An RNA of 177 nucleotides, treated with DMS and read out base by base. The DMS profile rests on 789 reads. For DMS the reverse transcriptase was MarathonRT. It was measured as part of the RMDB library M2PK50. Conditions: 150 mM KOAc, 10 mM MgCl2 and 150 mM bicine (pH 8.5), 24 C.

RNA sequence: GGGAACGACUCGAGUAGAGUCGAAAAGGGAGCGAGUUCGCUCGCUCCCAAACCCGAUGAAGCGGCACUUACGGAGCUUCAUACAUCUAAGAAGAGCAAUAAAAAGCGGUAGCUUCGGCUACCGCAAGUUUUAUGUGACGUUCGCGUCACAUAAAACAAAAGAAACAACAACAACAAC
Reactivity to DMS in 0.01 (KOAc 150mM, MgCl2 10mM, bicine 150mM(pH8.5), 24C), signal-to-noise 1, nucleotides 027 to 126: g030g000g030a010g050c010g020a000g000u020u010c170g080c000u000c030g000c000u000c010c000c010a020a020a110c000c030c010g020a060u000g020a030a000g020c010g000g070c080a020c240u000u020a230c130g000g000a120g020c010u000u020c000a020u000a100c140a100u010c080u000a180a120g000a110a030g020a080g000c100a160a070u010a070a070a050a260a070g010c000g000g000u000a000g000c000u000u010c220g030g000c000u000a000c000c000g020c000a000a010